This 177-nucleotide RNA was probed chemically with 2A3 and DMS. The RNA was probed in 150 mM KOAc, 10 mM MgCl2 and 150 mM bicine (pH 8.5) at 24 C. The 2A3 profile rests on 666 reads.
[RMDB]
RNA sequence: GGGAACGACUCGAGUAGAGUCGAAAAUAGUGGGUAGGCAGUUUUGAAUGAGCUCAGCCCCUUUUAAAGUGCCUCAACAAUUAUAACAUGUAGGCAUCUUCAACAAGUUCGUUCAAGUCUGAAGUGGGCUAUCAUGCGUUUUCGAACGCAUGAUAGCAAAAGAAACAACAACAACAAC
Reactivity to 2A3 in 0.01 (KOAc 150mM, MgCl2 10mM, bicine 150mM(pH8.5), 24C), signal-to-noise 1, nucleotides 027 to 126: u130a000g010u180g000g080g030u010a000g070g000c040a020g050u140u070u030u100g040a040a050u050g000a020g000c000u000c010a150g050c000c020c010c030u040u200u000u120a050a010a010g040u010g020c000c040u040c000a090a110c030a120a040u280u150a080u130a300a130c140a080u080g010u100a000g000g000c000a000u130c020u110u060c020a020a050c000a010a010g030u000u040c020g020u030u000c030a000a020g040u000c010u010g020a000a000g060u250g180g000
Reactivity to DMS in 0.01 (KOAc 150mM, MgCl2 10mM, bicine 150mM(pH8.5), 24C), signal-to-noise 1, nucleotides 027 to 126: u000a030g010u000g010g000g010u000a020g010g000c050a080g000u000u000u000u000g010a090a010u000g010a010g000c000u010c090a250g000c060c020c010c040u000u030u020u010a010a010a050g000u000g000c010c000u010c050a050a070c120a100a070u010u000a200u010a180a130c270a050u000g000u000a000g000g000c000a010u000c030u020u000c140a040a030c240a080a020g000u000u000c010g010u010u000c060a000a080g000u000c020u000g000a050a070g000u020g010g000